[RMDB]
RNA sequence: GGGAACGACUCGAGUAGAGUCGAAAAAGCGAUUCGUCGCUAAACUCCCGUAGGCUCUCGUAACAUCGUGGAGUGUCUUGGAUUUACAGCUUCGAAAGAGGCUGUUGUCAGACACCCACGUGGAGAGCCUAAACGGCAUAUACGUAUUCGUACGUAAUCUUCAUAUAUUUUUCGAAAUAUAUGAAGAAAAAGAAACAACAACAACAAC
Reactivity to 2A3 in 0.01 (KOAc 150mM, MgCl2 10mM, bicine 150mM(pH8.5), 24C), signal-to-noise 7, nucleotides 027 to 156: a010g010c010g000a010u060u150c260g050u010c010g130c010u030a100a080a080c050u020c000c000c010g000u020a020g010g000c000u010c000u010c010g050u080a070a060c070a300u180c040g000u030g020g040a300g030u000g010u000c040u060u160g100g010a050u240u200u150a020c000a000g000c000u020u000c010g080a150a090a050g010a010g010g010c000u000g010u010u000g000u010c010a000g000a000c010a000c010c000c000a000c000g000u000g000g000a000g000a000g000c000c000u000a000a000a000c010g120g010c140a090u170a040u050a220c000g020u010a030u030u120c160g040u050a010c000g010u040a090a140
Reactivity to DMS in 0.01 (KOAc 150mM, MgCl2 10mM, bicine 150mM(pH8.5), 24C), signal-to-noise 2, nucleotides 027 to 156: a050g010c010g010a090u000u010c240g010u000c020g030c010u000a030a050a120c090u000c030c000c010g040u010a040g010g000c000u000c000u000c000g000u000a120a140c110a050u000c010g040u000g000g000a190g050u000g010u010c000u000u000g040g010a040u000u000u000a030c000a030g000c000u000u000c000g000a130a130a300g000a050g010g010c000u000g000u000u000g000u000c000a060g010a020c000a000c010c000c010a010c020g000u010g020g010a060g010a030g020c000c000u000a000a020a050c070g010g010c070a110u010a200u010a010c010g020u000a060u000u000c260g010u000a010c030g000u000a070a100